An RNA of 177 nucleotides, treated with 2A3 and DMS and read out base by base. The 2A3 profile rests on 103,328 reads. Reactivities are given for positions 27 through 126. For DMS, 83,598 sequencing reads were counted. It was measured as part of the RMDB library OK1LIB.
RNA sequence: GGGAACGACUCGAGUAGAGUCGAAAACGAUAUGUGAACGCAUGUACCCUAUUGUAGCGUAUUAGUAUGCUCGUAGAACGCUACAACAUUGUCAUGAAAAUGACAAUGGUACAUGCUACGAGCAUAAGGUAGUGGUUGAUUUCGAUCGACUACUACCAAAAGAAACAACAACAACAAC
Reactivity to 2A3 in 0.01 (KOAc 150mM, MgCl2 10mM, bicine 150mM(pH8.5), 24C), signal-to-noise 9, nucleotides 027 to 126: c030g020a070u070a090u190g200u060g120a090a010c050g000c020a000u000g000u020a030c020c020c040u050a060u000u010g000u000a000g000c000g000u020a060u050u040a030g070u010a010u020g000c000u000c000g000u000a010g010a070a000c000g000c000u000a000c000a000a000c010a020u000u010g000u000c000a000u010g050a030a040a030a020u010g000a000c000a000a000u000g000g000u020a010c010a010u020g000c000u000a000c000g000a000g000c000a000u020a010a010
Reactivity to DMS in 0.01 (KOAc 150mM, MgCl2 10mM, bicine 150mM(pH8.5), 24C), signal-to-noise 9, nucleotides 027 to 126: c110g010a130u060a030u020g010u020g010a070a090c200g000c010a000u000g000u000a030c030c090c130u020a130u000u000g010u000a000g000c000g020u000a130u020u030a070g010u010a010u000g010c010u000c000g010u000a030g010a070a030c010g000c000u000a000c000a020a000c080a020u010u000g000u000c000a000u000g000a110a060a130a010u000g000a010c000a000a010u000g010g000u000a010c030a020u000g000c010u000a000c010g000a010g010c000a010u010a080a150